An RNA of 177 nucleotides, treated with DMS and 2A3 and read out base by base. The data come from the RNA Mapping Database (RMDB), library M2PK90. For 2A3, 1,960 sequencing reads were counted. DMS (dimethyl sulfate) methylates the pairing face of unpaired adenines and cytosines.
RNA sequence: GGGAACGACUCGAGUAGAGUCGAAAAUCUAUCACCAGCCCAUGUUUACGACACGAAUGGGCUGUUGCAAAUUACGUAUAGGUCUUGCAACAUCGUGUCGAAACGUUCCCAAGCUAUACGCCACAAAUAGUUGAUUCGAUUUCGAUCGAAUCAACUAAAAAGAAACAACAACAACAAC
Reactivity to DMS in 0.01 (KOAc 150mM, MgCl2 10mM, bicine 150mM(pH8.5), 24C), signal-to-noise 2, nucleotides 027 to 126: u000c030u010a060u000c040a110c050c010a060g000c000c000c010a150u010g030u010u020u000a110c020g000a000c000a000c000g020a020a070u010g020g010g000c100u000g000u000u000g000c020a000a010a050u000u000a080c010g000u000a090u000a020g000g000u020c160u010u000g000c000a030a000c040a050u000c010g010u000g000u000c000g010a030a040a170c040g020u010u000c020c010c000a090a100g020c020u000a020u000a070c030g020c230c120a080c130a030a100a130
Reactivity to 2A3 in 0.01 (KOAc 150mM, MgCl2 10mM, bicine 150mM(pH8.5), 24C), signal-to-noise 2, nucleotides 027 to 126: u030c010u020a160u130c040a040c080c040a020g010c030c010c010a050u110g080u100u120u050a100c010g010a000c010a000c050g060a130a100u110g080g060g000c050u010g000u010u000g000c000a000a030a080u170u040a070c020g060u080a060u100a140g060g050u020c030u060u000g000c000a000a030c000a070u020c000g010u020g010u000c010g010a100a020a000c010g010u010u000c000c010c000a010a010g000c000u020a020u000a130c060g050c050c000a080c040a030a070a030